[RMDB]
RNA sequence: GGGAACGACUCGAGUAGAGUCGAAAAGGACUGCGCAGUCCGGCAACAUCUGCAGAGAGCCCGCUAUACGUGACGGAUUGGCUGAAGCGUACAGAAAUAUUGAGCCUCCUGCAAGAGGCAGCCAAGCAAAACGUACGUGAGUUCGCUCACGUACGAACUUACCUCGUAUCUUCGGAUACGAGGUAAGAAAAGAAACAACAACAACAAC
Reactivity to 2A3 in 0.01 (KOAc 150mM, MgCl2 10mM, bicine 150mM(pH8.5), 24C), signal-to-noise 3, nucleotides 027 to 156: g010g000a000c040u100g010c190g050c110a030g040u000c000c000g030g000c020a050a060c020a140u050c020u040g010c030a020g140a000g000a010g100c030c050c060g000c030u040a060u020a070c030g020u030g030a020c040g020g090a090u040u060g030g050c010u030g010a020a020g020c010g000u060a030c020a040g180a120a140a000u260a100u170u160g040a090g000c000c000u000c000c010u050g020c030a090a080g000a010g050g010c010a000g010c000c000a020a000g020c050a020a020a040a100c010g000u000a000c000g010u010g000a000g000u040u120c250g020c150u000c000a000c000g000u000a000c000g000a000a000
Reactivity to DMS in 0.01 (KOAc 150mM, MgCl2 10mM, bicine 150mM(pH8.5), 24C), signal-to-noise 1, nucleotides 027 to 156: g010g000a050c000u020g080c220g080c040a100g000u000c000c000g010g010c050a050a040c050a060u020c020u040g050c020a070g020a190g000a010g000c000c010c010g000c020u000a090u010a040c000g000u010g020a300c020g020g000a300u000u000g020g000c010u000g010a110a300g010c000g060u010a080c060a050g020a110a110a150u000a180u000u000g030a240g000c020c020u000c010c070u000g060c090a230a090g030a020g020g000c000a050g000c020c000a000a190g010c080a040a060a080a190c040g000u000a000c010g000u020g010a020g020u020u040c300g040c000u000c010a030c000g030u000a020c010g000a010a090
This 207-nucleotide RNA was probed chemically with 2A3 and DMS. Reactivities are given for positions 27 through 156. DMS adducts were read by reverse transcription with MarathonRT. Conditions: 150 mM KOAc, 10 mM MgCl2 and 150 mM bicine (pH 8.5), 24 C. For DMS, 1,708 sequencing reads were counted.